[RMDB]
RNA sequence: GGGAACGACUCGAGUAGAGUCGAAAAGGCAGCGAAUUCGUUCGCUGCCAAUACAGGACCUGGAGCCGGCUUCACGGCGCACGUCGAUGACGCCCGGGCCGGAGAAUCCAGAUUUCGAUCUGGAUAAAUAAUGAUCUCGUUUCGACGAGAUCAUUAUAAAAGAAACAACAACAACAAC
Reactivity to DMS in 0.01 (KOAc 150mM, MgCl2 10mM, bicine 150mM(pH8.5), 24C), signal-to-noise 2, nucleotides 027 to 126: g040g010c000a000g010c000g000a010a010u000u000c160g020u000u000c000g000c010u000g000c020c000a020a030u000a110c180a160g020g000a160c030c010u000g010g050a150g020c000c000g000g000c000u010u000c090a090c180g010g010c040g000c060a010c050g010u010c190g000a130u000g010a100c020g010c020c010c070g010g010g000c000c010g030g010a060g000a100a070u010c000c010a000g010a020u000u000u020c190g000a020u000c000u000g010g000a020u000a070a140
Reactivity to 2A3 in 0.01 (KOAc 150mM, MgCl2 10mM, bicine 150mM(pH8.5), 24C), signal-to-noise 1, nucleotides 027 to 126: g000g010c010a000g000c000g010a000a030u160u130c190g120u090u020c000g060c030u000g000c030c000a020a000u020a010c010a010g050g020a100c020c000u080g110g110a050g050c020c020g010g000c030u130u130c080a030c090g020g000c020g010c020a040c020g300u300c090g120a300u080g130a060c010g000c010c010c020g030g020g000c000c000g000g020a010g010a010a010u030c000c010a000g070a060u040u100u040c110g060a040u000c000u020g000g010a000u050a070a180

The record gives the reactivity of an RNA of 177 nucleotides to DMS and 2A3. The RNA was probed in 150 mM KOAc, 10 mM MgCl2 and 150 mM bicine (pH 8.5) at 24 C. It was measured as part of the RMDB library M2PK50. For 2A3, 915 sequencing reads were counted. DMS (dimethyl sulfate) methylates the pairing face of unpaired adenines and cytosines.